[RMDB]
RNA sequence: GGGAACGACUCGAGUAGAGUCGAAAAGAUAUGGAAUCCUCGGGAGCUCGUACCCAUCGGAAACGAUGGAAGAAGAGCGAGGAUCGAGGGAUUCCUAAGUCAAAACGCGGAGGUUCGCCUCCGCGAACGAUCAUAAAAUGUUCGCAUUUUAUGAUCGAAAAGAAACAACAACAACAAC
Reactivity to DMS in 0.01 (KOAc 150mM, MgCl2 10mM, bicine 150mM(pH8.5), 24C), signal-to-noise 5, nucleotides 027 to 126: g000a020u000a040u010g000g000a020a010u000c000c000u000c000g010g020g010a020g030c000u000c000g000u010a170c300c010c000a000u000c000g020g000a010a020a030c000g020a010u000g010g010a070a070g000a210a200g000a020g000c000g010a060g020g000a010u010c000g000a030g000g020g000a020u000u000c000c000u000a000a060g010u000c010a080a050a080a180c030g010c000g010g000a010g010g000u010u010c240g000c000c000u000c000c000g010c010g000a020a050
Reactivity to 2A3 in 0.01 (KOAc 150mM, MgCl2 10mM, bicine 150mM(pH8.5), 24C), signal-to-noise 4, nucleotides 027 to 126: g000a000u010a000u040g010g000a000a000u000c000c000u000c000g000g020g000a010g000c000u000c020g060u090a180c030c000c000a000u000c000g000g010a000a010a000c000g000a010u020g050g020a040a060g160a170a030g000a010g000c010g000a080g000g000a000u000c010g000a050g120g230g050a010u000u000c000c000u000a010a000g000u000c030a020a030a100a140c030g000c010g020g010a000g040g010u110u200c300g160c030c010u000c000c010g000c000g000a000a010